[RMDB]
RNA sequence: GGGAACGACUCGAGUAGAGUCGAAAAGAUAUGGACCCAAAAUGCUGGAGAUUGUAGGGCGUUUGACGACGAUCGGAAACGAUCGUCCGAGCCUGAGGAUCGUUGAAAGCAUUUUGGGUCCUAAGUCCUAUGGGUACAGGUUCGCCUGUACCCAUAGAAAAGAAACAACAACAACAAC
Reactivity to DMS in 0.01 (KOAc 150mM, MgCl2 10mM, bicine 150mM(pH8.5), 24C), signal-to-noise 3, nucleotides 027 to 126: g020a110u000a220u020g000g020a030c010c000c000a010a010a010a010u010g020c010u010g010g000a130g020a020u000u000g020u000a300g010g010g000c010g030u000u010u020g020a260c300g000a000c010g020a010u000c000g000g000a130a130a190c000g020a010u000c000g040u000c000c020g000a080g020c020c000u010g000a220g010g000a000u000c000g020u000u020g000a120a110a050g000c000a000u000u000u020u000g000g000g010u000c000c000u000a020a050g000u000c030
Structure probing data (DMS) for a 177-nucleotide construct. For DMS the reverse transcriptase was MarathonRT. The DMS profile rests on 2,571 reads. Conditions: 150 mM KOAc, 10 mM MgCl2 and 150 mM bicine (pH 8.5), 24 C.